[RMDB]
RNA sequence: GGGAACGACUCGAGUAGAGUCGAAAAUCGUACGUACUCAUGCGCACCUGUACCCAUGCAUGCAUAUAUUCAUAUAUACAUACUUUAUGCGCGUAGGUAUGUAUUUAUGUAAUAAACAUUUUUGUACAGUAAUACCUCAGUUCGCUGAGGUAUUACUAAAAGAAACAACAACAACAAC
Reactivity to 2A3 in 0.01 (KOAc 150mM, MgCl2 10mM, bicine 150mM(pH8.5), 24C), signal-to-noise 3, nucleotides 027 to 126: u070c000g020u050a020c030g030u000a030c020u000c050a040u080g000c030g000c000a060c040c010u080g060u100a080c030c000c000a020u050g030c020a060u070g050c060a060u190a000u020a020u180u030c020a000u020a010u000a010u000a020c000a010u010a010c020u100u160u140a090u220g090c100g000c020g040u020a010g020g020u000a010u020g000u000a000u000u020u010a000u020g010u060a030a020u020a060a180a020c040a130u060u170u120u100u240g050u020a030c020
Reactivity to DMS in 0.01 (KOAc 150mM, MgCl2 10mM, bicine 150mM(pH8.5), 24C), signal-to-noise 3, nucleotides 027 to 126: u010c130g010u000a050c070g010u000a030c090u020c070a070u010g010c060g000c070a050c060c050u000g000u000a120c030c050c030a120u020g020c100a050u000g010c100a050u010a170u010a040u000u000c000a030u000a010u000a010u000a010c000a000u000a010c010u000u000u000a090u020g000c080g000c080g000u000a020g020g000u010a000u000g000u000a010u000u000u000a010u000g000u010a040a020u010a060a130a100c070a050u010u000u010u000u010g010u010a130c150

Overview
The data come from the RNA Mapping Database (RMDB), library OK2TRN. Structure probing data (2A3 and DMS) for a 177-nucleotide construct. The RNA was probed in 150 mM KOAc, 10 mM MgCl2 and 150 mM bicine (pH 8.5) at 24 C. 2A3 adducts were read by reverse transcription with SuperScript II with manganese.